The record gives the reactivity of an RNA of 177 nucleotides to DMS and 2A3. The DMS profile rests on 15,314 reads. For 2A3 the reverse transcriptase was SuperScript II with manganese.
RNA sequence: GGGAACGACUCGAGUAGAGUCGAAAACUAUACAGAAUAUUGUGGCUGAAAUCUCGUUAGCUUGGUCUGAGUUGCAUUUUGUAUAAUCUAGAGGUGACUGAAGGGGAGCACUGAGGUGGAGCUGUCCAUAAAAGUACGAAUUCGUUCGUACUUUUAUAAAAGAAACAACAACAACAAC
Reactivity to DMS in 0.01 (KOAc 150mM, MgCl2 10mM, bicine 150mM(pH8.5), 24C), signal-to-noise 8, nucleotides 027 to 126: c070u000a070u010a100c060a090g000a080a160u010a090u010u010g030u010g000g010c020u000g000a090a080a060u000c030u000c070g000u000u010a080g020c050u010u000g010g010u000c030u000g000a070g010u000u000g010c040a050u000u000u000u000g000u000a060u000a060a090u010c070u000a090g010a080g000g020u000g010a060c060u000g000a080a080g010g010g010g010a080g020c050a050c060u000g010a070g010g030u000g010g000a080g010c050u000g000u000c070c080
Reactivity to 2A3 in 0.01 (KOAc 150mM, MgCl2 10mM, bicine 150mM(pH8.5), 24C), signal-to-noise 3, nucleotides 027 to 126: c010u020a010u080a160c030a020g120a180a030u160a040u290u150g060u070g030g000c010u040g050a050a030a060u050c030u000c030g070u030u090a040g020c020u020u040g040g070u070c010u050g030a010g020u020u020g010c030a010u030u020u000u110g030u030a120u020a160a080u060c020u030a040g010a010g090g030u020g040a030c010u060g030a060a030g040g000g000g010a020g010c010a000c050u060g020a020g060g010u030g010g000a010g020c040u020g040u030c010c000